Description
Structure probing data (2A3 and DMS) for a 177-nucleotide construct. The DMS profile rests on 1,857 reads. Conditions: 150 mM KOAc, 10 mM MgCl2 and 150 mM bicine (pH 8.5), 24 C. Values cover nucleotides 27 to 126. DMS (dimethyl sulfate) methylates the pairing face of unpaired adenines and cytosines. 2A3 adducts were read by reverse transcription with SuperScript II with manganese.
[RMDB]
RNA sequence: GGGAACGACUCGAGUAGAGUCGAAAAUAUAUUCUGGCUAAAGGGCCGUUACAAGUAGGAGAUUCAGUUCUCUUGCAAGGCCAUUCUCUAGCUAAGAAUAUCCUGCAUGUCGUAGGCCCAGAUGCCCGUUAAUGGAGUUGUUCGCAACUCCAUUAACAAAAGAAACAACAACAACAAC
Reactivity to 2A3 in 0.01 (KOAc 150mM, MgCl2 10mM, bicine 150mM(pH8.5), 24C), signal-to-noise 3, nucleotides 027 to 126: u100a000u000a010u020u020c010u000g010g020c000u000a030a010a040g010g010g030c020c000g000u040u120a090c090a150a060g020u010a010g020g010a010g010a010u020u110c030a090g300u080u000c000u000c000u010u000g040c010a050a060g000g060c000c000a030u220u030c050u000c000u020a000g010c020u050a160a010g000a000a000u000a000u000c000c000u000g000c020a040u200g090u300c100g010u040a020g010g000c000c010c000a030g020a060u110g020c020c050c030
Reactivity to DMS in 0.01 (KOAc 150mM, MgCl2 10mM, bicine 150mM(pH8.5), 24C), signal-to-noise 2, nucleotides 027 to 126: u020a020u000a030u010u000c010u000g000g000c000u010a010a060a030g010g000g030c000c000g040u000u000a160c190a120a130g000u000a010g010g010a030g010a000u010u000c300a130g010u000u000c000u000c000u000u000g000c010a060a020g010g010c010c000a170u010u010c000u000c050u000a000g010c000u010a030a040g010a010a010u000a000u000c010c010u000g010c050a080u010g020u000c120g010u000a030g000g020c030c010c040a170g010a120u000g010c020c040c080